[RMDB]
RNA sequence: GGGAACGACUCGAGUAGAGUCGAAAACACGUACUGACAGUGGCCAUCAUCUAGACGGCCUAGUACAUCAUAGCGCAGGCCGGCCGAUCGCGAUCGGCGCCAUGCGCCGAGUAGCGCUAUGCUGGUACCUACGUCGUCAGUUCGCUGACGACGUAGGAAAAGAAACAACAACAACAAC
Reactivity to DMS in 0.01 (KOAc 150mM, MgCl2 10mM, bicine 150mM(pH8.5), 24C), signal-to-noise 2, nucleotides 027 to 126: c110a100c230g010u000a020c040u000g020a160c090a160g040u000g020g010c000c010a060u000c010a220u050c190u000a160g000a010c050g020g010c010c020u010a000g000u000a040c030a100u010c060a020u000a040g050c010g060c000a080g000g000c050c030g000g030c010c000g000a040u000c130g000c210g010a100u010c010g000g000c000g010c100c140a050u000g020c090g040c000c000g000a110g000u010a180g000c000g020c050u000a030u000g000c090u010g000g000u000a130
Reactivity to 2A3 in 0.01 (KOAc 150mM, MgCl2 10mM, bicine 150mM(pH8.5), 24C), signal-to-noise 1, nucleotides 027 to 126: c080a010c060g030u050a020c010u120g190a070c070a120g060u100g070g000c030c000a060u070c010a000u000c190u180a050g010a070c050g010g030c030c010u040a000g000u020a000c010a010u060c010a010u060a030g030c060g000c090a060g080g000c000c000g030g000c000c030g020a030u050c060g020c050g180a050u000c020g000g000c020g000c130c010a150u190g010c040g000c000c000g000a050g120u180a050g000c000g000c020u030a000u050g020c020u060g060g000u070a110
The record gives the reactivity of an RNA of 177 nucleotides to DMS and 2A3. For DMS the reverse transcriptase was MarathonRT. The DMS profile rests on 1,107 reads.